Chemical mapping of a 177-nucleotide RNA with DMS and 2A3. For 2A3 the reverse transcriptase was SuperScript II with manganese. The RNA was probed in 150 mM KOAc, 10 mM MgCl2 and 150 mM bicine (pH 8.5) at 24 C. The 2A3 profile rests on 2,847 reads. DMS (dimethyl sulfate) methylates the pairing face of unpaired adenines and cytosines. The DMS profile rests on 4,036 reads.
[RMDB]
RNA sequence: GGGAACGACUCGAGUAGAGUCGAAAAUAAUAUGCAUAUCGAGUUCCCAUGUAUUUUCGUAGCCCUGCGGCUGUAACAUUACAGCUUAGUAAGAAUGCUACCUAACGAUAGCUAGCCGCAGGAUUAAGUUGACGUAAAGUUUCGACUUUACGUCAACAAAAGAAACAACAACAACAAC
Reactivity to DMS in 0.01 (KOAc 150mM, MgCl2 10mM, bicine 150mM(pH8.5), 24C), signal-to-noise 4, nucleotides 027 to 126: u010a060a120u010a070u020g000c080a070u000a100u000c050g010a170g030u000u000c000c000c000a110u000g030u000a020u020u000u000u010c070g010u010a100g010c070c000c000u000g010c010g000g020c000u010g010u010a070a100c210a100u010u000a020c020a160g000c180u010u010a120g010u010a010a020g010a090a090u000g010c010u000a030c040c010u010a100a140c250g000a050u000a000g000c000u010a010g000c010c010g000c000a000g010g000a020u000u010a050a120
Reactivity to 2A3 in 0.01 (KOAc 150mM, MgCl2 10mM, bicine 150mM(pH8.5), 24C), signal-to-noise 3, nucleotides 027 to 126: u070a010a020u130a040u210g050c040a030u070a060u230c100g050a020g060u010u020c010c020c010a010u040g010u020a080u000u100u020u080c070g010u030a010g030c010c000c010u000g000c000g010g000c000u030g050u040a080a060c040a120u000u100a020c040a070g120c140u070u070a110g000u000a030a010g030a070a020u090g000c010u020a040c010c010u050a130a000c090g100a160u040a050g000c030u020a000g020c030c000g000c000a020g000g020a000u000u000a000a000